[RMDB]
RNA sequence: GGGAACGACUCGAGUAGAGUCGAAAACAGAGCUAGUGUUCACCCGCGGUGAAGGAGCUCGCCUGUAUGAUGCCCAUGGGAAGGAGUACCUGGACUUUGCAGCAGGAAUCGCGGUCAACGCACUUGGCUCCGUACAGGACUUCGGUCCUGUACGGAGAAAAGAAACAACAACAACAAC
Reactivity to DMS in 0.01 (KOAc 150mM, MgCl2 10mM, bicine 150mM(pH8.5), 24C), signal-to-noise 1, nucleotides 027 to 126: c120a050g020a040g000c000u030a040g000u020g010u010u010c060a100c120c010c180g000c050g010g070u000g000a070a080g010g010a080g030c030u000c060g000c030c000u000g010u000a100u030g010a100u000g030c030c010c000a020u000g000g010g000a030a090g010g000a040g000u010a080c080c050u000g000g000a040c100u000u000u010g000c090a110g000c050a020g030g010a100a050u000c060g040c000g000g020u020c070a030a170c260g000c050a080c060u000u000g030g000
Reactivity to 2A3 in 0.01 (KOAc 150mM, MgCl2 10mM, bicine 150mM(pH8.5), 24C), signal-to-noise 2, nucleotides 027 to 126: c010a010g050a010g000c050u090a020g070u060g090u130u060c060a050c070c070c040g000c080g080g000u100g030a110a070g110g140a070g030c000u000c050g000c000c000u040g050u050a220u160g100a090u160g060c070c000c010a090u170g000g010g030a090a190g040g030a020g000u050a060c000c020u030g000g030a050c040u220u110u250g060c080a070g010c000a020g020g020a080a010u060c050g000c010g020g040u080c100a070a060c050g030c020a030c030u070u040g030g000